An RNA of 177 nucleotides, treated with 2A3 and DMS and read out base by base. 2A3 adducts were read by reverse transcription with SuperScript II with manganese. DMS adducts were read by reverse transcription with MarathonRT. Conditions: 150 mM KOAc, 10 mM MgCl2 and 150 mM bicine (pH 8.5), 24 C. For DMS, 6,123 sequencing reads were counted.
[RMDB]
RNA sequence: GGGAACGACUCGAGUAGAGUCGAAAACAUCGUUCAUCAUUCUAGAUGCUCAAAGUGUCAAGAAUACCGAUCCUGCUGAAAGUAGUGGCUACGAUGGUGGUAAAAAGGUGAGUGGGAUUAAGCGCCAGUAAGAAGAGGUUUUCGAACCUCUUCUUACAAAAGAAACAACAACAACAAC
Reactivity to 2A3 in 0.01 (KOAc 150mM, MgCl2 10mM, bicine 150mM(pH8.5), 24C), signal-to-noise 3, nucleotides 027 to 126: c020a030u050c030g060u070u020c030a100u030c010a010u120u000c010u040a050g010a020u020g030c010u050c110a260a200a020g020u030g040u050c010a000a040g040a100a020u020a100c030c030g000a060u050c000c000u050g050c020u080g110a180a040a000g040u110a020g030u050g070g010c020u020a020c050g060a080u080g050g050u030g020g030u090a080a110a020a010a030g020g020u020g030a040g020u070g020g000g000a030u070u090a100a030g020c030g010c050c000a010
Reactivity to DMS in 0.01 (KOAc 150mM, MgCl2 10mM, bicine 150mM(pH8.5), 24C), signal-to-noise 5, nucleotides 027 to 126: c110a070u000c060g020u000u000c070a070u000c080a070u000u000c030u000a100g010a050u010g000c010u010c200a100a120a130g040u010g020u000c010a090a050g010a040a040u000a110c110c060g000a070u000c030c020u000g010c030u000g000a050a070a110g000u000a050g030u000g010g020c070u000a070c080g010a070u000g010g010u010g000g010u010a030a050a060a060a090g010g010u000g010a060g020u000g000g010g010a080u000u000a060a100g000c060g000c030c060a090